[RMDB]
RNA sequence: GGGAACGACUCGAGUAGAGUCGAAAAUUACUCUUGUUAGGUGAAAGUUGAUGGUCGCCGAGCCUGUCCGUACAUCCAAAAAGGACUCUAUGUAGUAGGAAGUCGAGAGCCUAUGAGAGUUAGAGUCAUGCCUAUUUUGUGUUCGCACAAAAUAGAACAUAGGUUUUAUGUUCGCAUAAAACCUAUGAAAAGAAACAACAACAACAAC
Reactivity to DMS in 0.01 (KOAc 150mM, MgCl2 10mM, bicine 150mM(pH8.5), 24C), signal-to-noise 3, nucleotides 027 to 156: u000u010a100c020u000c030u000u000g010u000u000a100g030g040u010g010a090a060a130g030u000u000g010a110u000g030g030u000c060g020c030c010g000a130g020c030c020u000g020u000c020c030g020u000a090c050a110u000c060c080a040a050a090a100a140g010g000a040c000u000c030u000a040u000g000u010a270g030u000a040g000g010a060a090g020u000c100g020a190g020a220g010c020c010u000a020u000g010a180g020a150g010u010u000a010g000a060g010u000c020a100u000g010c060c000u000a010u000u000u010u010g030u000g000u000u000c300g040c000a020c000a010a000a030a010u000a020g010a060a160
Reactivity to 2A3 in 0.01 (KOAc 150mM, MgCl2 10mM, bicine 150mM(pH8.5), 24C), signal-to-noise 4, nucleotides 027 to 156: u080u040a060c010u020c020u070u070g070u080u120a050g020g020u040g050a100a090a080g040u090u080g050a100u070g030g050u050c040g000c080c020g040a020g010c010c020u030g020u020c010c000g020u040a040c030a090u010c050c000a060a080a010a050a050g100g000a020c000u000c020u020a060u090g040u010a050g010u000a010g030g040a110a020g030u060c060g010a040g020a010g220c010c000u010a020u040g040a050g000a010g050u010u060a020g000a000g010u030c030a050u130g050c000c000u000a000u000u000u000u010g010u000g040u040u040c170g020c090a010c000a000a000a000a000u000a010g000a030a010

Conditions: 150 mM KOAc, 10 mM MgCl2 and 150 mM bicine (pH 8.5), 24 C. An RNA of 207 nucleotides, treated with DMS and 2A3 and read out base by base. The DMS profile rests on 8,295 reads. The 2A3 profile rests on 3,609 reads.